[RMDB]
RNA sequence: GGGAACGACUCGAGUAGAGUCGAAAAGAUGGGUCCGAUGGAUUAAUGCGUCGCCAGCCAUUGGAUCCUGAUUGAUAGAUUGAGGGCGACGGUCGGAUCACUCGGUAAUUCGGUGCUCCACGAGUGAUCCGUGAUGAUAGUUAAGAGGAGCACCUAAACCGAUUAUAUGAUUCGUCAUAUAAUCGGUAAAAGAAACAACAACAACAAC
Reactivity to DMS in 0.01 (KOAc 150mM, MgCl2 10mM, bicine 150mM(pH8.5), 24C), signal-to-noise 2, nucleotides 027 to 156: g000a140u000g020g020g010u000c010c010g030a030u000g030g000a160u000u000a070a040u010g010c000g030u000c030g000c050c050a300g000c000c030a030u000u000g020g030a040u010c010c010u010g010a090u010u000g010a220u010a080g010a200u010u010g010a140g060g010g020c000g010a040c000g020g000u010c000g000g000a020u000c000a000c000u000c000g040g030u000a040a050u000u000c030g010g000u000g000c000u020c000c030a080c000g000a020g020u010g020a020u020c000c010g000u010g000a060u000g010a120u000a120g020u010u010a100a100g010a220g000g010a040g020c010a030c020c010u000a040a100
Reactivity to 2A3 in 0.01 (KOAc 150mM, MgCl2 10mM, bicine 150mM(pH8.5), 24C), signal-to-noise 5, nucleotides 027 to 156: g110a050u110g000g000g000u000c000c000g000a000u010g000g010a030u100u150a180a070u300g070c020g000u000c000g000c000c010a020g040c010c000a000u000u000g000g000a000u000c000c000u010g020a000u030u120g030a020u020a150g110a080u020u220g100a120g010g010g060c000g000a000c000g000g010u030c000g000g000a000u000c000a000c000u010c010g020g080u150a100a110u240u200c080g000g000u000g000c000u000c000c000a010c010g000a000g000u000g000a000u000c000c000g000u010g010a030u040g000a010u040a170g180u240u160a110a040g060a050g060g010a000g000c000a000c000c000u000a020a010